[RMDB]
RNA sequence: GGGAACGACUCGAGUAGAGUCGAAAAACGUAUCGAGCAGCGCUCAACUCUGAAAAACAUCAAGACCAUGUGUCUCUAACUGUGCCACUCUGUGGUUCAGGAAACCUGGUUGAAAAACUUUCACCAUUCACCCCCAGGUUCGCCUGGGGGAAAAGAAACAACAACAACAAC
Reactivity to 2A3 in 0.01 (KOAc 150mM, MgCl2 10mM, bicine 150mM(pH8.5), 24C), signal-to-noise 3, nucleotides 027 to 129: a000c080g020u100a050u090c100g020a000g010c030a000g060c030g030c060u020c040a030a050c000u000c040u110g090a060a010a010a030a000c070a080u180c080a040a030g030a110c010c020a060u100g050u030g030u040c010u000c020u110a110a130c030u020g000u010g030c030c000a030c000u090c000u060g030u000g020g000u000u000c010a000g030g000a020a050a000c000c010u000g000g030u020u030g040a050a040a000a000a010c050u080u070u020c020a040c070c040a030u020u010c020a100
Reactivity to DMS in 0.01 (KOAc 150mM, MgCl2 10mM, bicine 150mM(pH8.5), 24C), signal-to-noise 3, nucleotides 027 to 129: a090c170g040u040a070u030c090g010a110g080c070a170g090c050g050c130u000c030a040a120c050u020c000u000g020a050a070a060a080a130c130a130u020c090a070a120g050a090c030c050a030u040g010u010g000u010c050u050c070u030a090a150c000u040g000u020g020c060c060a070c030u080c120u100g010u050g000g040u060u000c010a000g000g050a040a060a100c030c010u040g010g020u060u010g040a020a010a000a030a020c130u010u010u040c030a000c010c050a050u010u020c040a180
This 170-nucleotide RNA was probed chemically with 2A3 and DMS. The reactions ran in a buffer of 150 mM KOAc, 10 mM MgCl2 and 150 mM bicine (pH 8.5), at 24 C. It was measured as part of the RMDB library 15KLIB. For DMS, 5,242 sequencing reads were counted.